[RMDB]
RNA sequence: GGGAACGACUCGAGUAGAGUCGAAAAACGUCCUGCUGCUGUGAGCAUCUCGUGCUCCGUUUCUGCGUGGCGUGUACUGUUCCUCAGGGUGUGUACCUGGGAGUGGAGCUGCUGGCUCACAGGGUAACAGACCUUUGGAGAAGCUGCAGACGCUUCAAUACCUAUUAUGAUUCGUCAUAAUAGGUAUAAAAGAAACAACAACAACAAC
Reactivity to DMS in 0.01 (KOAc 150mM, MgCl2 10mM, bicine 150mM(pH8.5), 24C), signal-to-noise 3, nucleotides 027 to 156: a070c120g010u000c020c020u010g040c020u000g010c020u000g030u010g010a040g030c030a130u010c120u000c170g040u000g000c000u000c010c050g010u000u000u010c010u000g030c100g020u000g010g020c000g020u010g010u010a060c050u000g020u000u000c030c020u000c030a110g000g000g020u010g030u000g040u000a080c010c000u000g000g010g020a050g010u000g030g010a100g030c040u000g020c070u000g030g020c010u000c010a050c000a050g000g030g010u000a120a090c040a090g000a070c010c020u000u010u030g060g020a080g020a050a080g010c010u000g020c030a090g010a070c090g000c000u000u000c020a250
Reactivity to 2A3 in 0.01 (KOAc 150mM, MgCl2 10mM, bicine 150mM(pH8.5), 24C), signal-to-noise 5, nucleotides 027 to 156: a000c020g080u050c010c020u010g000c020u000g020c010u030g060u100g110a010g010c000a060u080c080u080c210g110u060g010c000u000c020c020g030u040u090u070c080u090g000c000g070u080g000g010c030g000u030g020u040a090c050u060g080u080u040c010c000u030c020a010g000g000g040u120g030u030g020u130a040c010c000u010g010g040g020a060g000u100g030g060a070g000c030u100g010c080u140g130g020c000u020c010a040c000a000g000g000g010u050a070a020c030a020g140a100c020c000u110u180u210g080g010a120g010a050a000g000c060u090g000c070a030g030a180c070g000c040u020u030c010a000